[RMDB]
RNA sequence: GGGAACGACUCGAGUAGAGUCGAAAAUCGAACGAGAGAUCUCUCGUGUACUCGAUCGAGUGUGUGUACACGAGUGUUCACUCACUCACGUUCUCACGUUCUCGAACUCACGUGAUCGAGAGUUCGAGAGAGUGAGAUCGAACUCGUACGAACUCUCCUAGGACUAGGCUUUCGAGCCUAGUCCUAGAAAAGAAACAACAACAACAAC
Reactivity to 2A3 in 0.01 (KOAc 150mM, MgCl2 10mM, bicine 150mM(pH8.5), 24C), signal-to-noise 3, nucleotides 027 to 156: u030c000g000a010a030c030g000a000g000a010g040a110u030c030u000c010u000c050g000u010g000u000a010c020u030c170g190a270u090c110g030a250g090u170g010u060g020u010g000u070a010c020a000c030g020a020g010u030g010u050u010c020a040c070u090c020a060c040u080c000a030c030g030u040u000c020u000c010a010c020g110u150u050c000u010c000g020a000a000c000u010c000a070c050g130u160g190a200u250c090g030a040g010a000g120u000u000c000g000a000g000a000g000a020g000u000g000a000g000a000u030c010g000a090a040c000u000c010g010u030a000c010g000a030a030c040u010c000u000c060
This 207-nucleotide RNA was probed chemically with 2A3. Reactivities are given for positions 27 through 156. The 2A3 profile rests on 2,074 reads.